An RNA of 177 nucleotides, treated with DMS and 2A3 and read out base by base.
2A3 adducts were read by reverse transcription with SuperScript II with manganese.
Reactivities are given for positions 27 through 126.
For 2A3, 2,228 sequencing reads were counted.

RNA sequence: GGGAACGACUCGAGUAGAGUCGAAAAGAUCCAGAAAGACGGCCCGCCCUGGACAGGGUAUCUGGAAGAGAACUUCCAGGUGGGAAACGAGUUCCAGCACUACACCUUCGAGUUCACCAUGCAGGAGUCCAUACGUAUGGUUCGCCAUACGUAUGGAAAAAGAAACAACAACAACAAC
Reactivity to DMS in 0.01 (KOAc 150mM, MgCl2 10mM, bicine 150mM(pH8.5), 24C), signal-to-noise 4, nucleotides 027 to 126: g030a090u000c030c010a130g000a110a090a090g000a080c090g010g020c020c010c010g030c040c020c010u010g000g030a070c140a050g000g000g010u000a020u000c010u010g000g000a040a030g020a270g000a100a150c020u000u000c010c010a000g020g020u010g000g000g010a020a070a090c090g000a160g010u000u000c030c040a100g000c070a070c060u000a090c070a090c070c040u000u010c050g010a080g000u000u010c070a110c040c030a080u010g000c100a080g010g010a160g010
Reactivity to 2A3 in 0.01 (KOAc 150mM, MgCl2 10mM, bicine 150mM(pH8.5), 24C), signal-to-noise 2, nucleotides 027 to 126: g010a040u000c010c010a000g190a060a100a010g100a030c020g050g010c000c010c010g000c010c020c010u050g050g020a090c060a070g040g000g000u070a040u030c000u030g040g000a010a010g030a020g000a120a140c010u020u010c000c010a010g010g010u020g030g070g040a090a080a010c050g000a040g020u070u010c030c010a020g050c030a040c040u080a030c050a040c030c000u000u050c030g030a020g010u040u020c050a080c120c010a040u130g000c030a020g010g150a050g070